[RMDB]
RNA sequence: GGGAACGACUCGAGUAGAGUCGAAAAGUAGUUAUGCUGAAAAUCGUUGAGGUUGUAUGGAAUAGGUUAACCGUAAGACCUUAAGUAGAAAAACUUUAAAAUUAAUCUCAGGUAAAUUACUUUGAGUAAAACCUUCGUCGUUUCGACGACGAAGGAAGUUAAACAUUUGCUUCGGCAAAUGUUUAACAAAAGAAACAACAACAACAAC
Reactivity to 2A3 in 0.01 (KOAc 150mM, MgCl2 10mM, bicine 150mM(pH8.5), 24C), signal-to-noise 1, nucleotides 027 to 156: g010u000a010g000u000u120a180u170g030c030u040g070a070a060a120a090u120c110g040u000u110g010a000g000g030u050u010g020u050a080u080g000g030a150a040u120a200g140g050u070u030a090a040c020c000g010u000a000a000g010a040c030c000u030u010a050a020g000u070a030g110a090a210a000a040a040c010u110u210u200a010a290a060a090u160u100a040a170u030c030u030c010a000g010g010u040a140a000a240u060u100a010c000u090u080u080g020a020g030u050a030a080a000a070c000c000u030u000c000g000u010c000g000u010u170u000c100g050a000c000g000a000c000g000a030a010g000g000a000a000